Overview: Chemical mapping of a 207-nucleotide RNA with DMS and 2A3. Conditions: 150 mM KOAc, 10 mM MgCl2 and 150 mM bicine (pH 8.5), 24 C. The DMS profile rests on 2,340 reads.
[RMDB]
RNA sequence: GGGAACGACUCGAGUAGAGUCGAAAACGAAUUGUGUUCGCACAAUUCGAAAAAAGCGUACUACAUGGUGGGCAAGGAGCGCGUCCCAAAUAGGACGCCUUCUGAUGACCCGUAACAUCCAUGUAUCGCAAAAAAUCCUCAUGUUCGCAUGAGGAAACUGGAAGACUUUGUUCGCAAAGUCUUCCAGAAAAGAAACAACAACAACAAC
Reactivity to DMS in 0.01 (KOAc 150mM, MgCl2 10mM, bicine 150mM(pH8.5), 24C), signal-to-noise 1, nucleotides 027 to 156: c030g020a010a000u000u040g030u000g040u010u000c230g020c010a050c030a030a000u010u010c000g000a010a010a130a020a080a130g000c000g000u000a070c140u000a010c010a010u000g040g090u000g030g020g080c030a180a050g000g000a000g030c210g070c010g030u000c000c000c020a020a170a230u010a030g000g010a000c000g030c000c000u010u000c000u000g010a100u030g010a300c000c000c010g010u010a050a120c170a210u000c000c000a090u000g010u000a020u000c000g000c010a000a010a130a090a000a040u010c000c030u000c000a010u000g000u000u000c300g000c050a020u000g020a050g000g000a000a000a070
Reactivity to 2A3 in 0.01 (KOAc 150mM, MgCl2 10mM, bicine 150mM(pH8.5), 24C), signal-to-noise 1, nucleotides 027 to 156: c000g000a010a000u000u000g000u010g020u020u080c200g050c120a000c000a010a020u000u130c080g070a130a000a000a000a010a030g080c090g020u110a130c030u000a000c050a000u010g000g000u030g050g000g070c000a050a080g000g010a000g000c090g000c000g010u020c050c010c000a090a300a230u170a050g050g000a000c000g030c000c000u040u000c000u000g200a170u040g070a130c030c000c000g080u040a070a000c010a100u060c000c000a000u000g000u020a000u190c050g000c000a040a040a040a040a040a040u000c000c010u000c000a000u030g110u060u050c300g000c060a000u000g010a000g000g030a070a000a000
It was measured as part of the RMDB library RNAMAK.